[RMDB]
RNA sequence: GGGAACGACUCGAGUAGAGUCGAAAAGUCGCCGCGUCUACAUCAACGCCCAGCGCGGGCGAGGGAGGCUUCCUACGGGGGUGACCCAUUCGCCGGCAUGGUAGAGGACUGCAAGAUUGCCUCGACGAGUGCUAAUGAGGUUCGCCUCAUUAGCACUAAAAGAAACAACAACAACAAC
Reactivity to DMS in 0.01 (KOAc 150mM, MgCl2 10mM, bicine 150mM(pH8.5), 24C), signal-to-noise 2, nucleotides 027 to 126: g010u000c020g000c010c060g020c060g030u010c030u000a060c090a050u010c070a070a110c040g020c060c020c040a050g000c130g010c040g000g020g030c010g020a040g000g000g020a030g020g000c030u010u000c030c010u000a090c190g030g000g000g010g020u000g000a300c000c010c010a190u010u000c030g040c020c010g010g020c050a060u000g020g010u000a130g010a070g000g010a050c120u000g000c050a080a090g000a100u000u000g010c030c020u000c030g020a060c190g040
Reactivity to 2A3 in 0.01 (KOAc 150mM, MgCl2 10mM, bicine 150mM(pH8.5), 24C), signal-to-noise 1, nucleotides 027 to 126: g030u020c010g010c020c000g010c000g000u020c030u020a040c030a090u050c020a070a050c100g030c020c020c000a070g040c300g040c050g070g000g000c030g000a000g000g020g000a080g060g060c000u090u120c040c000u100a150c210g100g000g000g000g000u030g030a060c010c040c000a140u110u070c020g000c010c000g070g020c030a000u040g010g030u030a000g070a000g060g010a080c040u060g020c090a010a060g020a150u070u190g020c020c010u030c010g010a020c070g060